Structure probing data (2A3 and DMS) for a 177-nucleotide construct. Reactivities are rounded to 0.1 and cut off at 0 and 3. Source: RMDB library RFMREP, as collected in RNAgym. The DMS profile rests on 2,340 reads.

RNA sequence: GGGAACGACUCGAGUAGAGUCGAAAAACCAAACAUAUCACAUUUUUGGCAAAGGGAGCGAUAUUUGGGAUUGGAGCGAAUAAGUUGGCAAAAAGGAGUAAAGUUACAUAAUCUAGAAACUUCGGUAUCAUUAUUUCUUGUUCGCAAGAAAUAAUGAAAAAGAAACAACAACAACAAC
Reactivity to 2A3 in 0.01 (KOAc 150mM, MgCl2 10mM, bicine 150mM(pH8.5), 24C), signal-to-noise 2, nucleotides 027 to 126: a000c020c000a000a040a010c050a080u250a070u170c040a000c020a140u020u050u130u150u110g030g000c030a120a030a010g050g030g000a040g020c030g050a030u020a070u180u030u070g020g000g030a000u030u080g020g000a020g020c020g040a000a000u120a070a020g070u070u040g000g020c000a000a000a000a050a100g010g050a030g020u060a010a150a000g010u040u020a020c020a090u150a080a030u060c060u070a050g100a150a070a020c040u050u050c030g040g000u060a080
Reactivity to DMS in 0.01 (KOAc 150mM, MgCl2 10mM, bicine 150mM(pH8.5), 24C), signal-to-noise 3, nucleotides 027 to 126: a110c000c000a070a080a110c180a090u010a070u000c080a070c080a110u010u000u010u000u010g010g020c080a050a070a040g000g000g010a050g020c030g020a060u010a020u000u010u000g010g000g010a060u010u000g030g030a070g020c030g010a080a070u000a050a080g020u000u000g010g020c040a030a030a060a060a070g010g010a050g020u000a040a040a080g010u010u000a070c140a080u010a070a050u010c060u000a060g010a080a090a060c090u000u010c030g010g000u000a150

The RNA was probed in 150 mM KOAc, 10 mM MgCl2 and 150 mM bicine (pH 8.5) at 24 C.